[RMDB]
RNA sequence: GGGAACGACUCGAGUAGAGUCGAAAAGCACGUAUCUUCGGAUACGUGCAAAUAAAAUCAGCGGUAAGCAGGCGUAAAUUAUUACCGCUGAACGCCUGCUUAAAAGUCUUCCCUUCGGGGAAGACAACUUUUAUAGGCUGUUCGCAGCCUAUAAAAGAAAAGAAACAACAACAACAAC
Reactivity to DMS in 0.01 (KOAc 150mM, MgCl2 10mM, bicine 150mM(pH8.5), 24C), signal-to-noise 2, nucleotides 027 to 126: g000c000a000c000g020u010a000u000c000u000u010c250g020g020a010u000a000c000g030u010g000c010a000a020a070u010a080a030a030a090u010c070a030g010c050g000g030u000a030a010g020c070a040g000g020c040g010u000a060a100a090u000u010a140u010u000a090c040c030g030c040u000g000a040a020c040g010c000c000u010g010c030u000u010a040a040a080a140g020u000c020u000u000c000c000c000u010u020c230g030g000g000g000a010a000g000a000c000a030a040
Reactivity to 2A3 in 0.01 (KOAc 150mM, MgCl2 10mM, bicine 150mM(pH8.5), 24C), signal-to-noise 2, nucleotides 027 to 126: g020c010a000c000g000u000a010u010c010u030u090c210g050g000a010u000a000c010g000u010g010c000a010a020a010u020a000a000a000a060u070c020a010g050c010g010g080u040a040a010g050c030a010g100g000c050g050u090a090a120a000u150u140a110u080u130a070c020c000g010c020u030g020a000a000c010g020c000c010u020g020c010u030u030a030a050a020a000g000u000c000u010u000c000c000c000u010u050c300g030g000g000g010a000a000g000a000c000a000a010